[RMDB]
RNA sequence: GGGAACGACUCGAGUAGAGUCGAAAAGUAGACGCAAGGCGUAGGAAGCUGUCUUUUGACCCAAGCUUUAGAGUCAAGUCGGGCAUUAAAGAUAGGCCUGAAGACAAUCUGGACUGAAAUGCAUGAAGAUCCCUCAGGAGUUCGCUCCUGAGGGAUCAAAAGAAACAACAACAACAAC
Reactivity to DMS in 0.01 (KOAc 150mM, MgCl2 10mM, bicine 150mM(pH8.5), 24C), signal-to-noise 1, nucleotides 027 to 126: g000u000a160g000a080c020g000c030a240a020g000g000c060g000u000a140g000g100a060a090g000c060u020g000u000c000u000u000u130u000g060a120c020c120c070a040a130g000c100u030u010u000a060g000a130g000u000c000a010a240g000u030c110g000g000g030c060a040u080u100a100a100a150g060a070u000a140g000g030c000c000u020g000a110a000g000a010c230a140a120u050c010u000g000g000a070c070u060g020a070a000a110u000g000c120a010u000g020a090a230
Reactivity to 2A3 in 0.01 (KOAc 150mM, MgCl2 10mM, bicine 150mM(pH8.5), 24C), signal-to-noise 1, nucleotides 027 to 126: g030u090a020g000a000c000g000c080a050a150g000g000c000g130u100a070g090g000a030a000g000c100u030g140u090c080u010u140u000u020g170a130c000c000c000a000a000g070c000u070u070u000a080g010a000g000u000c040a090a090g040u000c010g000g060g000c050a150u090u060a170a010a000g080a090u190a080g000g100c000c000u080g000a080a080g000a100c000a170a110u000c000u170g000g050a000c000u030g090a060a070a000u220g040c110a000u040g030a080a040